About this RNA: Structure probing data (2A3) for a 207-nucleotide construct.
[RMDB]
RNA sequence: GGGAACGACUCGAGUAGAGUCGAAAAAGGAAAGCAUUCUUAGACUUUCUUGUCCCCCUGACAGGUACCAUGUAUAGCUACUUUUGUGUGGUUUAAAAUGAGCUUUGUUUUAAAUGUUAACAAUCUUGGAGCUACAGGGGUUUCUAUCAACAUAAAACGAUAUUAGGCUCUUCGGAGCCUAAUAUCGAAAAGAAACAACAACAACAAC
Reactivity to 2A3 in 0.01 (KOAc 150mM, MgCl2 10mM, bicine 150mM(pH8.5), 24C), signal-to-noise 1, nucleotides 027 to 156: a020g050g000a030a000a000g000c030a200u170u190c200u280u200a120g120a300c000u020u020u000c030u110u000g180u260c040c040c050c000c000u030g030a020c020a090g000g000u020a020c000c090a030u050g060u000a050u110a170g000c030u090a060c020u040u100u270u040g090u030g000u030g000g110u040u160u100a100a000a000a020u150g000a030g080c060u100u100u040g080u060u040u030u000a100a210a100u200g000u020u090a060a000c000a030a000u100c000u040u100g060g000a000g050c000u020a000c020a020g040g000g000g050u000u180u000c020u090a280u190c000a030a000c000a100u220a070a070a000a000
Conditions: 150 mM KOAc, 10 mM MgCl2 and 150 mM bicine (pH 8.5), 24 C. Reactivities are rounded to 0.1 and cut off at 0 and 3. Reactivities are given for positions 27 through 156.